[RMDB]
RNA sequence: GGGAACGACUCGAGUAGAGUCGAAAAUCCACUAUGAAUCUAGUCACUAAAUAAACACAAUUAGCUACUGUGUGUAAUACUGAGUGUUGAUAACACAAAAUAAUAGUAUAGUUUUGGAAGAUUAUACGCGCCCUUGCUCCGUUCGCGGAGCAAGGAACUACCUCUAUGUGUUCGCACAUAGAGGUAGAAAAGAAACAACAACAACAAC
Reactivity to 2A3 in 0.01 (KOAc 150mM, MgCl2 10mM, bicine 150mM(pH8.5), 24C), signal-to-noise 4, nucleotides 027 to 156: u020c020c010a030c070u160a140u250g120a120a110u090c080u090a050g070u090c030a020c100u130a160a020a140u130a090a140a020c040a000c020a050a130u160u110a050g060c060u090a070c060u020g010u010g000u000g030u110a060a060u060a180c050u070g070a020g090u040g020u040u050g110a140u210a230a000c020a000c010a040a100a010a070u160a050a060u070a090g010u010a010u010a030g010u020u050u090u160g070g030a100a040g000a050u000u040a030u030a050c010g030c000g040c030c000c000u000u000g010c000u020c000c000g020u030u030c160g000c000g120g000a010g020c000a010a000g000g000a000a000
Reactivity to DMS in 0.01 (KOAc 150mM, MgCl2 10mM, bicine 150mM(pH8.5), 24C), signal-to-noise 1, nucleotides 027 to 156: u000c010c010a210c090u000a130u000g000a040a120u000c080u000a120g000u000c060a100c050u000a000a060a100u000a120a170a060c030a030c040a040a090u010u010a160g010c120u000a070c080u000g020u000g030u000g030u000a090a210u000a060c030u010g000a180g030u000g050u000u000g040a100u020a110a120c030a110c000a100a030a040a100u000a090a220u000a050g000u010a090u010a050g010u000u000u010u010g000g030a090a120g000a030u010u000a030u000a030c000g000c170g000c060c010c000u000u000g020c000u000c000c000g000u000u000c270g030c030g010g010a030g020c000a000a000g000g000a030a050
The record gives the reactivity of an RNA of 207 nucleotides to 2A3 and DMS.
The DMS profile rests on 2,175 reads.
The RNA was probed in 150 mM KOAc, 10 mM MgCl2 and 150 mM bicine (pH 8.5) at 24 C.
DMS adducts were read by reverse transcription with MarathonRT.
For 2A3 the reverse transcriptase was SuperScript II with manganese.